[RMDB]
RNA sequence: GGGAACGACUCGAGUAGAGUCGAAAAAGAGGGGAUUCACUCAAGGAGGGGAGACCAUCUAUCUGCUUUGAGAAGCUGGGAAACAAAGUCAUAGGGUCAGGAUGGUGCCUGACUAUGGAUGCUCUCAAACAGAGAUAGGGUUCGCCCUAUCUCUGUUAAAAGAAACAACAACAACAAC
Reactivity to 2A3 in 0.01 (KOAc 150mM, MgCl2 10mM, bicine 150mM(pH8.5), 24C), signal-to-noise 3, nucleotides 027 to 126: a000g060a040g030g010g010g000a020u070u060c020a020c050u120c090a070a050g060g010a030g000g060g010g000a040g060a030c010c020a020u030c020u050a090u020c030u060g080c040u040u060u090g070a100g010a100a020g020c070u100g010g040g100a060a090a020c030a050a060a020g020u070c030a070u080a070g140g000g050u030c030a000g030g020a030u130g040g110u050g120c000c000u020g000a000c000u020a010u030g000g020a020u050g030c010u030c000u000c020a030
Reactivity to DMS in 0.01 (KOAc 150mM, MgCl2 10mM, bicine 150mM(pH8.5), 24C), signal-to-noise 5, nucleotides 027 to 126: a060g020a060g000g010g000g000a110u010u000c030a050c060u000c070a130a130g020g000a090g000g010g010g010a060g010a050c030c030a060u010c020u010a090u010c060u010g010c040u000u000u000g010a070g010a080a060g010c040u000g010g010g000a100a090a110c110a060a050a070g000u000c100a050u000a090g010g010g010u000c030a010g000g010a200u010g010g000u010g020c010c000u000g010a060c010u000a050u000g000g010a050u010g000c080u000c010u000c030a090